[RMDB]
RNA sequence: GGGAACGACUCGAGUAGAGUCGAAAAGCAUCUUGCUUCGGCAAGAUGCAAAUAAGGGUCAGUGCUUGCAGCUAGUCGUAAAUGCUAACUGGCCUUACGCUAAAACGAAUGCGUUCGCGCAUUCGAAUCGAUUAUCGAAGUUCGCUUCGAUAAUCGAAAAAGAAACAACAACAACAAC
Reactivity to DMS in 0.01 (KOAc 150mM, MgCl2 10mM, bicine 150mM(pH8.5), 24C), signal-to-noise 3, nucleotides 027 to 126: g010c000a000u000c000u000u000g000c000u000u010c160g040g020c010a010a010g000a000u000g000c000a010a020a050u000a070a070g010g010g010u010c000a010g020u000g000c130u000u010g010c090a060g010c160u000a120g010u010c210g010u000a080a050a100u020g000c000u010a080a030c000u000g000g000c000c000u000u000a030c170g010c100u000a050a090a110a120c030g000a000a020u000g010c030g030u000u010c150g010c000g010c000a010u000u000c000g030a050a060
Reactivity to 2A3 in 0.01 (KOAc 150mM, MgCl2 10mM, bicine 150mM(pH8.5), 24C), signal-to-noise 3, nucleotides 027 to 126: g000c000a000u040c000u000u020g000c010u040u040c150g080g000c000a000a000g000a000u000g010c000a000a010a000u070a020a010g060g010g000u000c000a000g000u010g080c070u110u080g030c010a030g030c060u180a050g110u100c080g090u060a100a110a080u120g000c000u050a070a020c000u010g000g020c010c010u000u010a050c070g000c080u160a050a000a050a090c010g000a000a000u000g020c000g000u040u030c300g000c000g000c040a000u040u000c000g000a010a040
Annotation: An RNA of 177 nucleotides, treated with DMS and 2A3 and read out base by base. The reactions ran in a buffer of 150 mM KOAc, 10 mM MgCl2 and 150 mM bicine (pH 8.5), at 24 C. The 2A3 profile rests on 4,298 reads.